[RMDB]
Chemical mapping of a 177-nucleotide RNA with DMS.
The RNA was probed in 150 mM KOAc, 10 mM MgCl2 and 150 mM bicine (pH 8.5) at 24 C.
It was measured as part of the RMDB library TTRDEL.
RNA sequence: GGGAACGACUCGAGUAGAGUCGAAAAGAUAUGGACGUGAUGACCUACCCACCCGAUUCUUCGGAAACGAAGAUUCGGAGGGCAAUGUCACGUCCUAAGUCAAAACGGGGGAGUUCGCUCCCCCGAACAUCAGAACGGUCUUCGGACCGUUCUGAUGAAAAGAAACAACAACAACAAC
Reactivity to DMS in 0.01 (KOAc 150mM, MgCl2 10mM, bicine 150mM(pH8.5), 24C), signal-to-noise 1, nucleotides 027 to 126: g020a060u000a300u000g000g030a000c000g020u000g000a000u000g000a190c230c120u000a100c010c000c000a290c100c020c010g060a000u020u000c000u020u000c000g000g000a060a160a300c000g000a020a020g000a020u000u000c010g000g000a240g000g020g040c050a020a030u000g010u000c000a020c010g000u020c020c000u000a020a040g000u000c050a100a060a100a100c060g000g000g000g000g040a000g020u020u000c220g000c010u000c030c000c000c000c000g000a000a010
Reactivities are rounded to 0.1 and cut off at 0 and 3. Values cover nucleotides 27 to 126.